Structure probing data (2A3 and DMS) for a 207-nucleotide construct.
For DMS, 2,500 sequencing reads were counted.
DMS adducts were read by reverse transcription with MarathonRT.
[RMDB]
RNA sequence: GGGAACGACUCGAGUAGAGUCGAAAAAGUUAGGUUCGCUAUGGUGCAACUCUUUAAGGCAAUAACGAACUAAUUCUAAGCAAGUAAUGGAGAAAUGCCAGUGUCACUAUCUAGCCAUAAUAGUGCUGUAAGUGACUUAGAUUCGUCUAAGUCACAAGCUGCUAAAUCAGUUCGCUGAUUUAGCAGCAAAAGAAACAACAACAACAAC
Reactivity to 2A3 in 0.01 (KOAc 150mM, MgCl2 10mM, bicine 150mM(pH8.5), 24C), signal-to-noise 4, nucleotides 027 to 156: a010g130u100u050a070g010g100u010u000c020g000c040u040a070u120g130g030u060g010c040a140a160c060u050c060u200u190u190a070a020g040g020c020a050a050u050a100a050c060g020a020a010c010u020a000a030u090u080c040u110a010a070g060c040a120a020g040u080a060a090u130g030g010a030g040a050a060a010u070g010c030c020a020g020u010g070u120c010a000c020u030a030u090c040u040a020g060c000c010a000u070a120a070u040a130g040u050g030c030u030g030u070a220a050g000u000g000a010c000u000u000a010g000a020u020u020c060g010u030c130u000a000a000g000u000c000a000c000a000a000
Reactivity to DMS in 0.01 (KOAc 150mM, MgCl2 10mM, bicine 150mM(pH8.5), 24C), signal-to-noise 1, nucleotides 027 to 156: a050g040u010u000a090g000g010u000u000c020g040c020u000a030u000g010g010u000g000c060a100a130c100u000c160u000u000u000a060a080g020g010c040a100a040u010a030a040c020g020a030a000c020u000a040a080u000u010c030u010a120a110g010c100a040a150g000u000a040a080u020g000g010a080g020a040a050a060u010g010c040c000a100g000u000g050u010c020a010c040u000a050u000c020u000a160g040c050c060a120u010a060a060u000a060g040u020g020c030u010g040u000a070a150g010u000g000a050c000u000u010a010g000a030u020u010c300g020u000c000u020a010a030g040u040c000a010c000a050a130